[RMDB]
RNA sequence: GGGAACGACUCGAGUAGAGUCGAAAAGGUGCUCUGAAUGGAGUGCUCUACUGAGAUCAUAAAAUAGAAGGUAAGCUAUUAUCUCUUACAACAGGGCAGGGCUUGUUGGAAUAGGCGGUAAAGUCUAAAAACUACCUCACCUUCGGGUGAGGUAGAAUCUGCUCAAUUUGUUCGCAAAUUGAGCAGAAAAAGAAACAACAACAACAAC
Reactivity to 2A3 in 0.01 (KOAc 150mM, MgCl2 10mM, bicine 150mM(pH8.5), 24C), signal-to-noise 1, nucleotides 027 to 156: g030g020u010g010c020u000c000u020g140a140a130u190g000g010a010g000u050g020c020u040c000u030a040c020u020g010a000g050a150u050c000a020u130a130a100a250a070u100a020g040a060a060g140g000u180a020a020g010c060u000a020u190u060a040u210c020u010c010u010u050a070c000a140a010c020a090g030g010g000c010a010g030g020g020c070u020u000g000u030u010g020g010a050a050u000a050g020g020c050g110g020u150a100a080a000g010u010c030u040a000a000a010a000a160c000u000a000c000c000u000c000a000c000c000u020u120c150g090g000g000u000g000a000g000g000u020a000g000a000a000
An RNA of 207 nucleotides, treated with 2A3 and read out base by base. The data come from the RNA Mapping Database (RMDB), library M2RFPK. Values cover nucleotides 27 to 156. For 2A3, 508 sequencing reads were counted. The RNA was probed in 150 mM KOAc, 10 mM MgCl2 and 150 mM bicine (pH 8.5) at 24 C. For 2A3 the reverse transcriptase was SuperScript II with manganese.